[RMDB]
RNA sequence: GGGAACGACUCGAGUAGAGUCGAAAAUACCGUAGAGUAUUAGCAAUCGUCGUAUUCUACGGAGCGUGUGUGACGAUUGAGAUACACUACAUACGCAUCAGACGGUAGUGUUCUCAAACCGUCUGAAGAUAGUAUGGGCAUUCGUGUCUAUGCUAUCAAAAGAAACAACAACAACAAC
Reactivity to DMS in 0.01 (KOAc 150mM, MgCl2 10mM, bicine 150mM(pH8.5), 24C), signal-to-noise 9, nucleotides 027 to 126: u030a090c050c020g010u000a000g010a040g010u000a010u000u030a120g020c050a110a070u030c140g010u020c090g010u000a010u000u000c010u010a020c020g010g000a110g010c130g000u010g010u000g010u010g000a030c020g000a090u000u010g000a070g000a050u040a030c050a050c030u010a010c000a080u020a300c100g000c090a130u030c080a060g010a070c040g000g000u000a040g010u020g000u000u000c010u010c010a080a060a040c060c000g010u000c000u010g000a070a100
Reactivity to 2A3 in 0.01 (KOAc 150mM, MgCl2 10mM, bicine 150mM(pH8.5), 24C), signal-to-noise 9, nucleotides 027 to 126: u170a020c010c010g000u000a000g000a000g010u010a010u080u120a070g080c080a110a180u170c090g120u040c020g000u030a020u030u010c010u020a020c020g020g010a030g030c090g010u090g000u020g030u050g040a010c020g010a050u020u050g020a030g010a040u140a050c040a000c010u030a000c000a070u150a050c060g010c060a120u080c030a060g050a050c010g020g000u020a020g040u030g030u070u000c020u000c000a020a030a030c050c000g000u000c000u010g010a020a020